[RMDB]
RNA sequence: GGGAACGACUCGAGUAGAGUCGAAAAGGGGUCAAGACAUGACGAGAUAGCUGAGCGAAGAACAUAUGCUGAAGCCUCCACGGCAUAUGGGAGCUCCGAAACGUCAACAGCUUGACGGAGGCACCCAAACCUCACAGUUGUUCGCAACUGUGAGGAACGACGUAAGUAACUUCGGUUACUUACGUCGAAAAGAAACAACAACAACAAC
Reactivity to DMS in 0.01 (KOAc 150mM, MgCl2 10mM, bicine 150mM(pH8.5), 24C), signal-to-noise 2, nucleotides 027 to 156: g000g000g070g010u020c020a060a010g000a090c090a260u000g010a080c000g000a170g010a220u010a100g000c130u000g020a080g030c030g020a150a210g010a110a240c040a030u010a030u000g010c010u000g010a010a080g020c030c000u000c000c010a300c000g020g000c020a010u000a050u020g000g040g000a110g000c010u000c030c080g020a060a070a160c030g050u000c010a060a140c080a140g010c020u000u000g010a090c020g030g000a040g070g030c000a090c000c000c030a100a080a160c000c000u010c000a010c010a020g000u000u000g020u010u010c300g010c010a040a020c010u000g010u000g000a000g010g010a010a050
Reactivity to 2A3 in 0.01 (KOAc 150mM, MgCl2 10mM, bicine 150mM(pH8.5), 24C), signal-to-noise 7, nucleotides 027 to 156: g070g010g030g020u010c010a000a020g030a100c160a210u220g000a010c040g020a040g090a250u200a090g150c290u160g030a000g000c020g140a300a000g000a010a000c000a000u000a000u010g000c020u020g010a090a020g000c000c000u010c000c000a030c020g000g010c000a000u000a000u000g000g000g010a000g000c000u000c010c010g060a100a080a040c010g000u000c020a070a070c040a110g120c010u000u010g000a000c010g000g000a000g000g000c000a040c000c000c000a040a090a060c000c000u000c000a000c000a000g000u000u030g050u110u150c220g040c150a000a000c010u000g000u000g010a000g000g000a000a010